[RMDB]
RNA sequence: GGGAACGACUCGAGUAGAGUCGAAAAGUUCGUCCAGGUUCCGGCUGCCUGACGCCAGUAGCUUUCGUGUCGCUUUUGUCUAUGUCAUGGGUUGACGUACGGUCAGGUCCCAGCGCACCACACGGGAUCAAGGGAUGGGGUUCGCUCCGUCCCUUGAAAAAGAAACAACAACAACAAC
Reactivity to DMS in 0.01 (KOAc 150mM, MgCl2 10mM, bicine 150mM(pH8.5), 24C), signal-to-noise 9, nucleotides 027 to 126: g010u010u010c040g010u020c020c020a080g000g010u010u010c030c020g000g010c030u010g000c030c020u010g000a080c080g010c070c020a060g010u010a060g000c040u000u010u020c050g010u000g010u000c030g000c060u000u010u010u020g010u020c060u010a070u020g010u010c040a060u020g000g010g010u020u010g000a060c040g010u020a060c100g000g010u000c030a060g010g000u010c030c020c020a090g000c060g010c050a070c030c030a080c060a070c050g000g000g010a160
Reactivity to 2A3 in 0.01 (KOAc 150mM, MgCl2 10mM, bicine 150mM(pH8.5), 24C), signal-to-noise 9, nucleotides 027 to 126: g030u050u060c020g030u040c050c010a020g010g020u060u030c020c000g030g010c020u020g020c000c010u020g010a030c030g010c030c010a060g020u040a010g010c000u040u040u050c050g020u020g040u030c020g020c060u060u060u080u110g080u040c050u070a100u120g050u030c020a050u060g100g020g020u030u050g020a030c020g030u080a040c050g040g020u020c010a010g000g030u000c000c000c000a010g000c010g000c010a030c000c000a030c000a010c040g020g010g020a050